[RMDB]
RNA sequence: GGGAACGACUCGAGUAGAGUCGAAAAGUGCAGCGCCCCCAGCAACCCAACGUGGAACUGCCUGAGUCGCGAAUCGGUGUCGACGUGGGUGUUCGUCGUCUGGCCACGGUCGCCACCGCGGACGGCGCCCUGUGCCCGCAUUCGUGCGGGCACAGGGAAAAGAAACAACAACAACAAC
Reactivity to 2A3 in 0.01 (KOAc 150mM, MgCl2 10mM, bicine 150mM(pH8.5), 24C), signal-to-noise 1, nucleotides 027 to 126: g070u050g020c000a010g070c020g080c000c000c030c010c000a000g000c000a010a010c080c000c000a060a060c160g110u090g030g040a140a010c090u190g010c000c000u060g030a030g030u110c000g010c000g040a030a060u160c110g010g010u010g060u040c010g000a030c050g040u090g070g000g080u130g100u070u110c030g120u000c050g000u000c070u170g070g000c000c010a050c040g040g120u030c030g000c050c050a070c000c000g010c000g010g010a050c000g000g030c000g040